[RMDB]
RNA sequence: GGGAACGACUCGAGUAGAGUCGAAAACAAACACUUUCGAGUGUUUGAAAAUCCUAAGUCGUCUAAGACAGAACUGGACAUGUCGUGUGUCGGAAACGACACCGACAACAGCCAGUUUCGAGACGAUAUGGAAAACACUGAUCCUUCGGGAUCAGUGGGUUGGUUAAUCAUUCGUGAUUAACCAACCAAAAGAAACAACAACAACAAC
Reactivity to DMS in 0.01 (KOAc 150mM, MgCl2 10mM, bicine 150mM(pH8.5), 24C), signal-to-noise 2, nucleotides 027 to 156: c020a010a000a000c000a000c000u000u010u000c300g050a050g020u010g000u000u000u000g010a070a050a080a130u000c010c020u000a070a240g000u000c000g040u000c000u000a130a130g020a220c300a070g000a040a010c010u020g030g010a060c090a300u000g020u020c000g000u010g030u040g040u010c000g040g010a170a100a270c000g040a050c010a000c020c000g010a020c020a030a020c090a100g020c000c010a070g010u000u000u000c050g000a130g010a020c020g000a040u010a230u010g000g000a050a070a120a260c010a010c000u000g010a020u000c000c010u030u000c300g090g040g000a010u000c000a000g020u020g000
Reactivity to 2A3 in 0.01 (KOAc 150mM, MgCl2 10mM, bicine 150mM(pH8.5), 24C), signal-to-noise 5, nucleotides 027 to 156: c000a000a000a000c000a000c000u080u100u250c210g180a020g010u010g000u010u000u010g010a050a020a000a040u040c020c000u040a110a070g020u000c010g000u020c020u070a180a070g080a110c070a100g050a050a010c000u000g010g030a040c040a180u050g000u000c020g010u030g000u000g000u300c010g010g050a080a100a070c000g000a000c000a000c010c000g010a000c000a000a020c020a010g030c000c000a000g000u010u010u050c030g010a000g000a000c000g000a010u030a060u100g050g030a030a100a040a000c000a000c010u020g000a010u000c010c010u030u040c260g060g000g000a000u010c000a010g000u000g000